[RMDB]
RNA sequence: GGGAACGACUCGAGUAGAGUCGAAAAUUCAAGGGUGUAUCGGAUUCUGUGGUGAGCCGCCCACGAAGUUGAACUAGAAAUUUAGCCCACUUUACACAAGAAGGGCGGGCGGAGGCGCGUUUGAGCCUCCCUAAAAAGCGUUCGCGCUUUUUAGGGAAAAAGAAACAACAACAACAAC
Reactivity to DMS in 0.01 (KOAc 150mM, MgCl2 10mM, bicine 150mM(pH8.5), 24C), signal-to-noise 8, nucleotides 027 to 126: u020u010c060a100a110g010g010g010u010g000u010a040u010c040g000g010a090u010u010c050u020g010u000g020g010u020g000a100g010c030c020g020c040c010c010a130c130g010a050a060g000u010u010g010a080a200c090u010a110g000a070a060a130u020u020u020a130g010c010c000c010a130c020u000u010u020a090c160a110c240a060a080g010a120a070g010g000g010c020g010g010g000c040g000g010a040g000g010c000g000c080g010u000u010u010g000a130g000c020c020
Reactivity to 2A3 in 0.01 (KOAc 150mM, MgCl2 10mM, bicine 150mM(pH8.5), 24C), signal-to-noise 8, nucleotides 027 to 126: u120u050c050a060a060g040g020g010u060g010u050a080u120c050g030g050a040u120u010c020u060g050u030g050g040u060g020a010g020c010c000g000c000c000c010a020c040g050a040a020g040u070u170g030a060a020c050u040a070g120a080a210a120u170u180u110a040g000c010c010c010a030c010u030u070u140a120c160a020c020a060a050g080a060a130g020g030g000c000g010g010g000c000g020g000a020g000g000c020g000c010g040u000u060u050g010a000g000c000c010